[RMDB]
RNA sequence: GGGAACGACUCGAGUAGAGUCGAAAAGCUCCUUCAGGUGAACGAUCUCGGUUGUUUCUCUGAAGGCAUGAUCACCCCGUCAGAUGCGGAAGUUCGUGCUUCCGUCGAACGCGAAAGUCGGACGGCGAAAACGAGUUACCGUUCGCGGUAACUCGAACGUAAAACUUGAGUUCGCUCAAGUUUUACGAAAAGAAACAACAACAACAAC
Reactivity to DMS in 0.01 (KOAc 150mM, MgCl2 10mM, bicine 150mM(pH8.5), 24C), signal-to-noise 2, nucleotides 027 to 156: g010c060u000c010c000u000u000c020a020g020g010u000g010a020a040c020g010a020u000c010u010c220g050g000u000u010g000u010u000u000c020u000c000u000g010a020a030g010g020c070a020u000g010a090u000c040a200c010c010c000c000g010u010c010a110g010a140u000g000c000g020g010a040a110g010u000u000c190g040u000g010c000u000u000c000c020g030u000c040g000a060a110c070g000c060g040a110a100a170g000u000c000g000g000a040c010g000g000c090g010a080a060a110a160c030g000a060g020u000u010a000c000c000g030u000u000c260g010c060g030g010u000a000a030c000u000c000g000a020a010
Reactivity to 2A3 in 0.01 (KOAc 150mM, MgCl2 10mM, bicine 150mM(pH8.5), 24C), signal-to-noise 6, nucleotides 027 to 156: g030c020u020c000c000u000u010c010a040g060g010u110g070a020a000c010g020a030u030c040u100c210g150g010u010u020g010u000u120u050c020u000c000u010g000a010a010g000g000c020a110u140g030a040u070c040a120c010c010c000c010g000u020c030a050g030a090u130g010c010g010g020a010a010g010u150u300c150g120u300g080c000u010u010c000c000g000u010c010g020a090a030c070g020c030g140a130a080a020g080u080c030g010g030a020c010g010g040c060g020a040a040a020a040c010g000a000g000u000u000a000c010c000g010u030u050c280g010c010g080g000u000a000a000c000u000c000g000a000a000